[RMDB]
Chemical mapping of a 207-nucleotide RNA with DMS and 2A3. Reactivities are given for positions 27 through 156. The RNA was probed in 150 mM KOAc, 10 mM MgCl2 and 150 mM bicine (pH 8.5) at 24 C.
RNA sequence: GGGAACGACUCGAGUAGAGUCGAAAAAUGGCCUGCUACAUUGCCAGGAACAGCCAUUGCAGGCACUACACCUAAUCUCUAAGGAGUACCAUGGCACGUAAAACCCACGAAGGCGACUGCGUAGACAUCGAUCCCUUCAUUCCUACCGGUCAGUGUGACCUUUAGUUCGAUUCGUCGAACUAAAGGUAAAAGAAACAACAACAACAAC
Reactivity to DMS in 0.01 (KOAc 150mM, MgCl2 10mM, bicine 150mM(pH8.5), 24C), signal-to-noise 2, nucleotides 027 to 156: a140u020g000g030c020c010u020g010c000u010a110c100a070u010u000g040c030c020a180g020g020a150a140c060a040g000c040c010a180u000u000g000c030a100g000g010c010a090c060u010a080c040a070c020c040u030a040a120u000c030u010c050u000a080a050g030g000a130g040u000a090c060c060a080u020g010g170c010a050c050g010u010a070a050a050a130c030c000c020a040c090g000a130a090g010g050c050g000a110c050u020g010c040g020u000a070g020a080c050a080u000c000g010a090u000c000c040c020u000u000c080a150u000u020c050c000u000a040c040c010g050g000u000c030a150g000u000g060u020g000
Reactivity to 2A3 in 0.01 (KOAc 150mM, MgCl2 10mM, bicine 150mM(pH8.5), 24C), signal-to-noise 3, nucleotides 027 to 156: a000u090g050g000c010c000u000g000c000u040a030c020a200u030u150g040c020c030a070g100g020a160a030c050a070g050c040c020a030u030u070g000c020a020g010g030c040a020c030u050a020c040a050c030c010u040a100a130u030c030u000c010u060a070a060g090g020a030g060u050a040c030c030a040u070g020g000c030a010c040g030u040a020a050a050a120c030c010c040a020c080g030a020a050g060g010c060g000a020c040u030g010c120g160u070a020g040a100c040a060u060c080g030a070u070c050c000c000u040u020c040a090u070u100c000c020u020a050c040c040g060g020u100c040a070g030u050g080u100g150